[RMDB]
RNA sequence: GGGAACGACUCGAGUAGAGUCGAAAACUACGCUAUUAUAAUUAAUACACAAUCAGGAUGGCAGUUUUAAAAAAACCAUCUAGUAAGGUAAAUGACCGGACGAGCGUUACAUAAAACGCAUACCUAAAUGCGAACAUACAUUCGUGUAUGUUCGCAUAAAAGAAACAACAACAACAAC
Reactivity to DMS in 0.01 (KOAc 150mM, MgCl2 10mM, bicine 150mM(pH8.5), 24C), signal-to-noise 2, nucleotides 027 to 126: c020u040a070c170g020c200u000a000u050u000a070u000a060a130u000u010a010a030u020a040c070a150c130a010a070u040c100a180g000g010a040u000g040g080c200a110g000u010u020u000u000a010a060a010a040a000a010a070c000c080a120u020c050u040a030g040u000a020a040g100g000u060a000a020a050u010g010a040c020c100g000g000a100c050g000a130g000c030g090u000u010a060c150a220u060a130a060a050a010c020g000c010a050u000a100c020c040u000a070a060
Reactivity to 2A3 in 0.01 (KOAc 150mM, MgCl2 10mM, bicine 150mM(pH8.5), 24C), signal-to-noise 2, nucleotides 027 to 126: c020u160a060c070g000c030u120a090u250u160a020u010a080a090u220u100a070a070u160a110c110a080c030a130a230u200c090a010g070g050a000u000g020g000c070a140g050u060u010u090u090a070a120a000a000a000a000a040c010c000a040u000c000u000a000g000u000a000a140g120g020u070a100a090a000u210g010a120c020c020g020g030a010c000g040a020g000c020g000u020u020a050c090a140u140a070a080a000a000c000g000c000a000u120a050c000c010u060a020a120